[RMDB]
RNA sequence: GGGAACGACUCGAGUAGAGUCGAAAAGAUAUGGAAUGAACUACAGCUCUGAAUGGACGAAGAACGUAUGUGUAAGCUCGGAAACGAGCUUACACAUACGGGAGUCCGCGAGCUGCAUUCCUAAGUCCUUACAAACUUUGUUCGCAAAGUUUGUAAGAAAAGAAACAACAACAACAAC
Reactivity to DMS in 0.01 (KOAc 150mM, MgCl2 10mM, bicine 150mM(pH8.5), 24C), signal-to-noise 2, nucleotides 027 to 126: g000a130u000a300u010g020g030a070a030u000g000a100a060c140u020a300c030a000g010c000u000c010u000g040a130a160u020g020g000a010c000g000a170a160g000a140a200c000g040u010a010u000g000u000g000u020a030a010g000c000u000c000g050g020a060a090a300c050g010a010g020c000u000u000a000c000a000c000a020u000a000c000g020g010g000a200g000u000c000c010g020c090g000a020g020c000u000g000c020a000u000u000c010c000u000a090a070g000u000c040
About this RNA
The record gives the reactivity of an RNA of 177 nucleotides to DMS. The RNA was probed in 150 mM KOAc, 10 mM MgCl2 and 150 mM bicine (pH 8.5) at 24 C. The DMS profile rests on 1,330 reads.